[RMDB]
RNA sequence: GGGAACGACUCGAGUAGAGUCGAAAAGAAUGCUGGUCAUCCGUUCGGACCAGAAAGGCAGUCACACACGAAACCUGAGGAAACAGGAAGCCACAACAAAAGCCAUGUGAUUAGCGAACGGAAAGAACAGCGCUAUAGUAUUCGUACUAUAGCGCUGAAAAGAAACAACAACAACAAC
Reactivity to DMS in 0.01 (KOAc 150mM, MgCl2 10mM, bicine 150mM(pH8.5), 24C), signal-to-noise 4, nucleotides 027 to 126: g020a080a090u050g010c010u000g000g000u000c010a190u020c000c000g000u000u000c000g020g000a030c010c000a010g020a040a100a170g000g000c020a110g000u000c010a050c100a080c120a060c140g000a080a070a140c020c020u010g010a140g040g010a130a110a130c010a030g010g010a120a050g010c030c020a070c190a110a060c190a030a040a080a080g020c070c030a060u010g010u020g000a070u050u030a130g010c000g000a010a010c010g000g000a090a100a130g010a040a200
Reactivity to 2A3 in 0.01 (KOAc 150mM, MgCl2 10mM, bicine 150mM(pH8.5), 24C), signal-to-noise 6, nucleotides 027 to 126: g130a100a060u210g040c000u000g000g010u000c010a110u050c040c000g000u000u000c000g020g000a020c010c000a000g040a050a010a000g040g000c020a010g040u090c020a020c020a010c000a010c140g060a100a050a020c000c010u040g030a070g080g230a160a100a050c010a010g000g050a000a050g040c020c030a080c030a140a070c040a040a120a010a010g030c010c020a040u080g080u070g060a130u060u160a020g040c000g000a000a000c000g000g000a010a050a000g070a040a010
Background:
The record gives the reactivity of an RNA of 177 nucleotides to DMS and 2A3. It was measured as part of the RMDB library OK1LIB. The DMS profile rests on 5,489 reads. Conditions: 150 mM KOAc, 10 mM MgCl2 and 150 mM bicine (pH 8.5), 24 C.